[RMDB]
RNA sequence: GGGAACGACUCGAGUAGAGUCGAAAAUCAUCUUAACAUUUGAUAUAGUGAGCCUUAAUGUUAGCCUGUAAGUUUGUACAGGUGUUUUACUGUGGUUUUAAUUUGCAUUUCCCCAAUGACAAAGGGGCAUUCGAUUGAUUUUCGAAUCAAUCGAAUGAAAAGAAACAACAACAACAAC
Reactivity to 2A3 in 0.01 (KOAc 150mM, MgCl2 10mM, bicine 150mM(pH8.5), 24C), signal-to-noise 3, nucleotides 027 to 126: u030c000a000u030c010u110u090a070a040c000a100u050u050u200g070a050u090a030u080a250g180u070g060a020g040c030c010u060u110a100a020u080g020u050u050a030g000c020c000u030g010u040a080a180g150u150u290u290g080u010a010c010a010g000g080u040g010u030u130u050u020a040c050u030g010u080g110g000u010u080u020u090a110a130u050u050u130g050c010a010u040u070u080c050c000c020c030a030a100u180g030a090c040a020a090a070g040g000g020g070
Reactivity to DMS in 0.01 (KOAc 150mM, MgCl2 10mM, bicine 150mM(pH8.5), 24C), signal-to-noise 4, nucleotides 027 to 126: u010c020a030u010c110u000u010a060a100c080a080u000u010u000g020a100u000a100u010a070g010u000g010a050g010c040c030u000u000a060a050u010g010u010u010a200g010c010c010u000g020u010a020a100g010u000u000u010g020u000a010c020a020g010g020u000g010u010u020u000u000a040c070u000g020u000g000g020u010u000u000u000a050a150u000u000u010g010c090a060u000u000u000c000c010c000c210a080a060u010g010a090c100a040a080a100g000g010g010g010